This 177-nucleotide RNA was probed chemically with DMS and 2A3. The DMS profile rests on 10,051 reads. The 2A3 profile rests on 13,340 reads. For 2A3 the reverse transcriptase was SuperScript II with manganese.
RNA sequence: GGGAACGACUCGAGUAGAGUCGAAAAGAUAUGGACAUAAUGUCGCGAUAAGCUCCAGUCGGAAACGACUGAGAGCUUUUGACGCGACGAAUUAUGUCCUAAGUCAAAAGGACUGUUCGCAGUCCAAGAGUUACUAAAACUUCGGUUUUAGUAACUCAAAAGAAACAACAACAACAAC
Reactivity to DMS in 0.01 (KOAc 150mM, MgCl2 10mM, bicine 150mM(pH8.5), 24C), signal-to-noise 6, nucleotides 027 to 126: g010a030u000a300u000g000g000a010c000a010u000a030a020u010g010u000c000g040c000g010a160u010a030a030g010c000u000c010c010a010g010u000c000g010g010a130a090a160c010g010a020c000u000g010a100g000a010g000c000u000u000u000u000g020a200c080g000c000g000a010c010g010a080a060u000u000a010u000g000u000c000c000u000a010a090g000u000c040a080a100a150a180g000g010a010c000u000g010u000u010c200g030c010a020g000u000c000c000a080a100
Reactivity to 2A3 in 0.01 (KOAc 150mM, MgCl2 10mM, bicine 150mM(pH8.5), 24C), signal-to-noise 2, nucleotides 027 to 126: g040a020u070a050u190g000g000a000c010a000u030a030a020u110g010u020c000g020c020g050a090u040a230a010g010c000u000c010c000a000g010u000c000g050g030a080a070a040c010g000a000c000u000g020a020g000a010g060c010u010u010u020u020g010a010c000g010c010g000a000c000g010a020a040u040u000a010u020g000u000c000c000u000a060a000g050u020c030a030a000a050a230g020g000a010c010u010g060u130u140c300g000c270a010g000u000c000c010a000a020